An RNA of 207 nucleotides, treated with 2A3 and DMS and read out base by base. For 2A3, 5,508 sequencing reads were counted.

RNA sequence: GGGAACGACUCGAGUAGAGUCGAAAAGCACAUGGGCAGUGGAUUUGAUGGUCAUCUCACAUCGUGCUAGCGAGGGAACCCUGUCCGGGGGUGAACCGCGAAACAGUACCGGACUCACCGUGUGAGAUCCUGUCUUUCGGAGUUCAAACGGUUAAACGACAGUGUUUAAGUUCGCUUAAACACUGUCAAAAGAAACAACAACAACAAC
Reactivity to 2A3 in 0.01 (KOAc 150mM, MgCl2 10mM, bicine 150mM(pH8.5), 24C), signal-to-noise 4, nucleotides 027 to 156: g010c010a020c010a050u060g020g030g050c110a060g050u120g060g060a110u060u080u240g220a200u220g050g030u080c040a100u030c030u010c020a040c000a020u060c080g000u020g000c010u010a020g000c000g010a300g010g010g010a020a040c000c000c010u030g010u020c020c000g000g000g000g000g010u030g010a020a010c000c010g000c010g020a020a020a030c090a050g050u070a040c000c010g000g000a000c010u020c040a010c000c030g040u030g000u000g040a020g000a020u010c000c010u110g060u130c000u080u140u140c070g030g000a020g010u090u070c000a040a040a020c020g010g030u040u110a050a120a010c110
Reactivity to DMS in 0.01 (KOAc 150mM, MgCl2 10mM, bicine 150mM(pH8.5), 24C), signal-to-noise 3, nucleotides 027 to 156: g020c010a060c030a090u000g000g000g010c070a080g030u010g010g000a100u000u010u000g040a110u010g010g000u000c030a110u000c030u020c030a080c020a040u000c160g040u010g010c060u000a130g020c030g010a200g000g010g020a150a080c030c010c020u010g010u000c100c030g010g010g050g040g030u000g000a180a150c030c010g000c010g000a100a070a110c070a140g010u000a090c000c010g000g000a130c030u000c050a050c030c010g020u010g000u010g000a040g000a040u000c010c030u030g010u000c120u000u000u000c110g030g000a080g000u000u000c010a050a050a020c030g010g010u000u000a080a060a090c030
Reactivities are rounded to 0.1 and cut off at 0 and 3.
Reactivities are given for positions 27 through 156.
Conditions: 150 mM KOAc, 10 mM MgCl2 and 150 mM bicine (pH 8.5), 24 C.